[RMDB]
The record gives the reactivity of an RNA of 207 nucleotides to DMS and 2A3. High DMS reactivity at an A or C suggests that its Watson-Crick edge is free. For 2A3, 1,510 sequencing reads were counted. For DMS, 1,299 sequencing reads were counted.
RNA sequence: GGGAACGACUCGAGUAGAGUCGAAAAGCUAGUCGGAGACGACUAGCAACGAUCAGUUCGCUGAUCGGAACGUGCAUUCAAAUACGCUAGAAGCACGAAUAGGCGACGCUUAGCGUAGAACUGAGAAAGCAGAUAACAAAAAUAAAAAGGCGUCGCGCCUACUCGGUGGAUUCGUCCACCGAGUAGGAAAAGAAACAACAACAACAAC
Reactivity to DMS in 0.01 (KOAc 150mM, MgCl2 10mM, bicine 150mM(pH8.5), 24C), signal-to-noise 1, nucleotides 027 to 156: g000c000u000a000g000u010c000g000g030a300g000a300c050g040a060c000u000a000g000c000a000a000c060g010a000u040c010a000g000u000u000c280g000c000u000g000a000u000c030g000g010a060a040c030g000u000g080c010a300u000u000c010a100a140a240u000a000c000g040c000u010a190g000a050a150g000c000a100c010g030a040a130u000a160g050g000c000g000a030c010g030c000u000u010a040g030c000g000u010a040g000a150a290c150u010g010a140g000a130a080a110g000c050a160g000a200u010a090a230c010a000a140a020a100a220u080a020a090a140a110a150g000g050c050g080u000c000g080c000g000
Reactivity to 2A3 in 0.01 (KOAc 150mM, MgCl2 10mM, bicine 150mM(pH8.5), 24C), signal-to-noise 3, nucleotides 027 to 156: g020c000u000a000g000u000c000g000g010a040g020a130c000g000a000c000u000a010g000c010a020a000c000g000a000u000c000a020g020u060u110c130g020c140u000g000a030u010c010g000g060a020a010c040g010u000g020c060a290u010u040c000a010a020a050u050a010c010g000c040u020a020g000a010a020g020c000a000c020g000a100a130u150a140g060g000c010g000a000c000g000c010u050u050a010g000c000g040u000a020g020a130a040c030u040g000a010g110a200a100a010g110c060a010g050a140u250a180a030c060a050a100a070a030a010u220a070a070a020a000a000g020g000c000g000u010c010g000c000g010
The reactions ran in a buffer of 150 mM KOAc, 10 mM MgCl2 and 150 mM bicine (pH 8.5), at 24 C.